Source information: Chemical mapping of a 207-nucleotide RNA with 2A3.
RNA sequence: GGGAACGACUCGAGUAGAGUCGAAAAUCGAGACAGCCCACUCUAUGCCAAGCACUGUGUGGAAUGCCAGGUGGCUAAGAUGCGUACGGUUUAGUUUCCCUCCUUCAUCAGGCAGUUGAGGGGCGGGUGAAUGGGUUAGAGAGUUAACUGUGAUGCCUGAAAUCACGCAAUUCGUUGCGUGAUUUCAAAAAGAAACAACAACAACAAC
Reactivity to 2A3 in 0.01 (KOAc 150mM, MgCl2 10mM, bicine 150mM(pH8.5), 24C), signal-to-noise 1, nucleotides 027 to 156: u070c010g000a000g030a010c000a030g050c000c080c000a070c030u030c000u040a100u080g060c000c000a070a060g040c010a090c090u100g030u020g000u050g190g160a130a060u010g020c010c030a070g070g130u020g170g000c060u100a110a060g050a100u070g030c030g010u030a030c040g000g030u020u040u130a040g000u000u100u000c020c010c010u040c000c030u020u020c050a070u030c020a030g110g040c040a010g000u070u070g040a000g050g030g000g000c130g020g000g000u030g020a070a060u060g060g010g020u010u080a040g020a000g000a000g100u050u170a030a030c000u010g030u080g060a010u120g020c070c040
For 2A3, 745 sequencing reads were counted.